[RMDB]
RNA sequence: GGGAACGACUCGAGUAGAGUCGAAAAGGCUCAAAGCAUGCAGUUCACUAUUGCUUAUGAUCCAAAGUCUGCAUCUCUGCCGAUCCUUAAGGACCUGACAAAGCGCGAAGCUCGAUCCAUGAUCCGUGUCAUUGUCCCCGGAAUGGUUGAGCUUAUCGACACCCAUAAACUUCGGUUUAUGGGUGUCAAAAGAAACAACAACAACAAC
Reactivity to 2A3 in 0.01 (KOAc 150mM, MgCl2 10mM, bicine 150mM(pH8.5), 24C), signal-to-noise 2, nucleotides 027 to 156: g000g000c020u030c000a120a130a000g040c060a040u090g000c070a030g050u140u210c090a050c080u140a200u160u180g030c070u250u230a070u300g090a070u070c020c050a070a060a000g040u000c000u000g000c010a010u020c020u010c010u070g000c010c000g030a040u010c010c000u040u030a130a040g010g030a070c000c000u070g020a060c120a070a090a110g100c170g000c030g200a020a060g010c020u000c020g060a070u040c040c000a000u060g010a070u040c010c050g010u000g090u130c090a210u090u270g080u160c010c020c020c000g020g040a000a040u010g000g000u010u030g000a000g000c000u000u040a040u020c060